[RMDB]
RNA sequence: GGGAACGACUCGAGUAGAGUCGAAAACUAGCCGCCUAUUUACUUACUACUGAGGCCGCAAGUAUUCGUGAAUAUUGGUUUGAUGUUGAUAAUGAGAAUUUGCCCGAUGCGCUCGGCUUUGUGGAACCUGUCGCACCCAUGGUUUGGGCCGACGGCAAUUACAUCUCGGAUUCGUCCGAGAUGUAAUAAAAGAAACAACAACAACAAC
Reactivity to DMS in 0.01 (KOAc 150mM, MgCl2 10mM, bicine 150mM(pH8.5), 24C), signal-to-noise 1, nucleotides 027 to 156: c050u010a110g040c030c030g040c030c050u010a110u000u000u000a050c040u000u010a060c040u010a060c020u050g010a180g080g030c020c060g080c040a070a120g000u000a050u000u000c110g000u000g010a070a030u000a070u000u010g030g010u010u000u010g010a130u010g020u000u000g020a080u000a080a100u000g000a160g010a100a110u010u000u000g020c060c040c000g040a120u010g010c080g010c040u000c050g010g010c010u000u000u030g080u000g030g000a060a100c060c060u000g020u000c010g030c070a110c000c000c000a020u000g000g040u000u000u000g030g050g000c040c010g010a060c030g010g040c030a040
Reactivity to 2A3 in 0.01 (KOAc 150mM, MgCl2 10mM, bicine 150mM(pH8.5), 24C), signal-to-noise 3, nucleotides 027 to 156: c030u050a020g080c020c020g030c000c030u030a080u130u160u130a070c060u050u060a040c060u010a010c030u070g060a020g040g000c010c010g000c020a070a030g030u020a080u050u140c070g010u060g120a090a020u110a120u140u120g100g100u070u060u130g070a070u050g020u110u020g060a060u040a210a090u100g050a040g060a180a160u070u070u070g040c030c030c030g050a040u090g040c090g020c140u010c000g020g000c000u040u030u060g120u090g010g010a090a070c020c070u080g050u060c030g000c060a060c000c000c040a010u050g140g000u100u110u190g000g000g000c000c000g000a020c000g030g010c000a000
Source: RMDB library OK3TST, as collected in RNAgym. Structure probing data (DMS and 2A3) for a 207-nucleotide construct. 2A3 adducts were read by reverse transcription with SuperScript II with manganese. Values are in units of 0.01, from 0 to 300, in steps of 10. For 2A3, 1,009 sequencing reads were counted.